Annotation:
This 177-nucleotide RNA was probed chemically with 2A3 and DMS. DMS adducts were read by reverse transcription with MarathonRT.
RNA sequence: GGGAACGACUCGAGUAGAGUCGAAAACAUUCGUUGCCAUGGUCACAUAAAUAACACGGCACCGCUCGAGCGUCAAAUUAGUGAACUCGUGCAUUGGUCGAUUGAGAAUCGCAUUGCGACGCGGCGAAUUUAUGACUGACUUCGGUCAGUCAUAAAUAAAAGAAACAACAACAACAAC
Reactivity to 2A3 in 0.01 (KOAc 150mM, MgCl2 10mM, bicine 150mM(pH8.5), 24C), signal-to-noise 2, nucleotides 027 to 126: c040a070u090u080c040g000u020u070g010c010c020a040u050g040g030u100c060a040c010a120u200a140a190a040u160a130a040c030a010c090g020g000c030a010c000c020g000c000u040c010g020a030g000c070g070u010c030a020a070a140u190u140a160g160u060g060a010a000c010u000c020g010u040g000c030a060u020u080g090g010u040c020g010a030u000u200g090a130g100a070a050u030c010g000c000a030u000u040g000c010g020a020c040g000c020g060g020c030g030a040
Reactivity to DMS in 0.01 (KOAc 150mM, MgCl2 10mM, bicine 150mM(pH8.5), 24C), signal-to-noise 3, nucleotides 027 to 126: c090a170u000u010c070g000u010u000g000c010c050a090u000g010g000u000c070a050c090a080u010a060a100a100u010a110a110c100a140c080g000g030c020a050c060c070g020c050u000c040g010a060g010c080g010u000c040a040a150a110u010u000a090g020u000g010a120a070c010u000c020g000u000g000c020a120u010u010g000g010u010c020g010a070u000u000g020a130g000a080a070u000c040g000c030a050u000u000g000c040g010a050c050g000c110g000g000c060g000a070